RNA sequence: GGGAACGACUCGAGUAGAGUCGAAAAGGUCUCAAGACGAAUUUGAUGUGCAGCGUUUGGUUGAUGAUGAACUUCGUGCACACAAAGCGAAGCUUGUAGCAAAGGGUGAAAGCGUUGUUCAAGUCAAGUUCAUGGACAACUUCAGUAGCGGUAGCUGGCAUUCUUAAAGGUUCGCCUUUAAGAAUGCAAAAGAAACAACAACAACAAC
Reactivity to DMS in 0.01 (KOAc 150mM, MgCl2 10mM, bicine 150mM(pH8.5), 24C), signal-to-noise 2, nucleotides 027 to 156: g000g000u000c020u000c030a140a110g020a070c050g010a110a140u000u000u000g000a110u000g010u010g050c020a050g030c090g020u000u000u010g010g030u000u010g000a090u040g030a190u000g020a020a030c020u010u000c060g040u000g000c050a110c130a090c100a030a070a160g010c030g010a100a040g050c010u000u000g010u000a090g030c070a070a100a100g000g020g040u000g010a010a080a120g020c080g010u000u010g010u020u000c030a040a230g010u000c080a040a060g020u000u000c050a110u000g020g020a040c030a020a030c010u000u000c020a120g000u000a040g000c030g030g030u000a090g030c040u000g000
Reactivity to 2A3 in 0.01 (KOAc 150mM, MgCl2 10mM, bicine 150mM(pH8.5), 24C), signal-to-noise 5, nucleotides 027 to 156: g080g000u010c010u010c040a030a030g050a030c050g020a120a130u060u050u110g170a220u060g020u030g010c040a110g050c070g060u090u110u110g100g010u080u080g040a140u070g010a080u120g040a070a020c000u040u010c040g020u040g000c020a010c000a000c010a100a060a010g090c010g030a020a000g020c040u040u070g040u140a010g000c060a060a060a060g070g030g010u030g040a110a010a000g050c030g000u020u010g000u010u030c050a080a040g030u050c020a050a090g050u060u060c020a040u060g020g020a030c000a030a000c000u130u090c060a080g020u070a000g030c030g010g030u020a030g010c040u040g040
Record summary:
Structure probing data (DMS and 2A3) for a 207-nucleotide construct. The RNA was probed in 150 mM KOAc, 10 mM MgCl2 and 150 mM bicine (pH 8.5) at 24 C.